Background: The record gives the reactivity of an RNA of 207 nucleotides to 2A3. Reactivities are rounded to 0.1 and cut off at 0 and 3. The 2A3 profile rests on 588 reads. Values cover nucleotides 27 to 156. It was measured as part of the RMDB library OK3TST.
[RMDB]
RNA sequence: GGGAACGACUCGAGUAGAGUCGAAAAGCUAGUCGGAGACGACUAGCAACGAUCAGUUCGCUGAUCGGAAGGUGCAUUCAAAUACGCUAGAAGCACCAAUAUACGACGCGUAGCGUAAAACUGAGAAAGCAGAUAACAAAAAUAAAAAGGCGUCGAGAUACCGCAAAAUGUUCGCAUUUUGCGGUAUAAAAGAAACAACAACAACAAC
Reactivity to 2A3 in 0.01 (KOAc 150mM, MgCl2 10mM, bicine 150mM(pH8.5), 24C), signal-to-noise 1, nucleotides 027 to 156: g040c010u000a010g000u000c000g000g020a050g020a050c010g010a020c000u000a000g010c000a000a020c000g030a000u000c020a000g020u020u050c050g000c120u000g000a000u000c010g010g010a150a000g000g000u020g030c090a300u070u000c000a020a090a040u100a000c050g020c010u000a010g000a070a000g020c000a000c000c000a020a020u150a020u050a080c000g000a000c000g030c020g000u050a020g000c000g000u010a070a020a060a110c020u060g020a040g120a170a140a030g080c070a020g020a100u190a120a040c090a040a060a040a000a010u190a140a030a040a010a000g090g000c000g000u000c000g010a000g000